[RMDB]
RNA sequence: GGGAACGACUCGAGUAGAGUCGAAAAGCCUCCUCAUCUCUUCGACACCUUGGAGAGCGUGGAGAUCAACACCGCCAAGGCCAUGCUGCCGCUGAAUGACAAGAGCUACAUGUACUACUGGGCUGGCCUUCAACUAACUAUUCGUAGUUAGUUGAAGAAAAGAAACAACAACAACAAC
Reactivity to 2A3 in 0.01 (KOAc 150mM, MgCl2 10mM, bicine 150mM(pH8.5), 24C), signal-to-noise 9, nucleotides 027 to 126: g020c000c000u000c010c000u020c030a170u050c030u000c010u020u030c020g060a060c040a120c140c060u050u120g020g010a110g000a010g060c050g030u030g010g030a080g020a050u100c050a030a080c030a030c060c020g010c020c020a050a030g030g000c010c000a060u120g010c030u040g030c020c020g020c040u050g080a180a120u130g040a040c040a090a060g010a020g100c010u060a040c030a070u100g030u070a070c030u020a030c030u080g000g060g000c010u030g020g030c000
Reactivity to DMS in 0.01 (KOAc 150mM, MgCl2 10mM, bicine 150mM(pH8.5), 24C), signal-to-noise 9, nucleotides 027 to 126: g000c110c010u000c020c010u000c040a100u010c020u000c010u000u000c020g010a100c180a140c200c120u000u000g010g000a030g000a050g020c300g010u000g000g010a070g010a100u010c100a090a100c090a080c040c030g000c040c050a060a070g000g000c060c040a050u010g010c040u000g010c040c030g010c070u000g010a090a080u010g010a090c090a070a070g010a100g010c040u000a060c080a060u000g010u010a070c070u000a070c110u000g000g000g010c020u000g010g010c120
The record gives the reactivity of an RNA of 177 nucleotides to 2A3 and DMS.
For DMS the reverse transcriptase was MarathonRT.
The 2A3 profile rests on 44,843 reads.
The reactions ran in a buffer of 150 mM KOAc, 10 mM MgCl2 and 150 mM bicine (pH 8.5), at 24 C.
For 2A3 the reverse transcriptase was SuperScript II with manganese.
Values cover nucleotides 27 to 126.